[RMDB]
RNA sequence: GGGAACGACUCGAGUAGAGUCGAAAAAACCUUUUAGCCCUCCAAUAGAGGGAACUGAAACGUUCACCGUACCCGUAGAGUUCUGCGUUACAGACCAUUGAAGCGUUACGUAAUCUAAGCCUCCACCCCCAUCAAAGACUUUCGAGUCUUUGAUGGGAAAAGAAACAACAACAACAAC
Reactivity to DMS in 0.01 (KOAc 150mM, MgCl2 10mM, bicine 150mM(pH8.5), 24C), signal-to-noise 2, nucleotides 027 to 126: a060a040c050c010u000u000u010u000a040g030c010c010c010u020c010c080a130a140u010a180g010a040g000g000g000a030a050c020u000g000a040a040a050c170g010u000u000c020a120c040c060g000u000a060c020c040c010g010u000a070g000a100g030u000u000c020u000g020c080g020u000u000a040c060a080g000a060c040c020a070u000u010g020a060a120g000c120g000u000u010a070c070g010u010a040a040u000c070u000a090a100g030c090c000u010c060c020a110c090c060
Structure probing data (DMS) for a 177-nucleotide construct. For DMS the reverse transcriptase was MarathonRT.